[RMDB]
RNA sequence: GGGAACGACUCGAGUAGAGUCGAAAAGUGCAGACAUUCCACUACAUGACAGCCUGAGUAGGUUUAUUCAUAAAUGCUUAGCUGCAGAGAUGAGGACAUUAAGUAUUUCAUGGUAAUGUCACUAAUAAAUGACCAAAGCAUAGGCAGCUGCUGUAAGUGUCCUCAACACGUUCGCGUGUUGAGGACAAAAAGAAACAACAACAACAAC
Reactivity to 2A3 in 0.01 (KOAc 150mM, MgCl2 10mM, bicine 150mM(pH8.5), 24C), signal-to-noise 1, nucleotides 027 to 156: g000u000g030c040a000g030a010c030a050u120u000c010c080a000c110u070a010c030a120u110g180a070c000a010g000c000c000u080g110a110g080u140a150g080g000u200u080u000a110u080u260c010a060u070a120a140a000u080g010c030u040u000a010g030c030u030g110c000a050g000a010g010a190u140g030a000g000g000a000c000a070u030u030a050a050g000u000a230u110u120u150c160a010u050g000g010u070a050a000u010g000u000c030a050c080u040a040a050u180a090a100a190u010g080a100c000c030a230a000a000g000c000a020u010a060g020g000c000a000g050c000u040g080c080u000g050u000a070a000g070

The record gives the reactivity of an RNA of 207 nucleotides to 2A3. The data come from the RNA Mapping Database (RMDB), library OK3TST.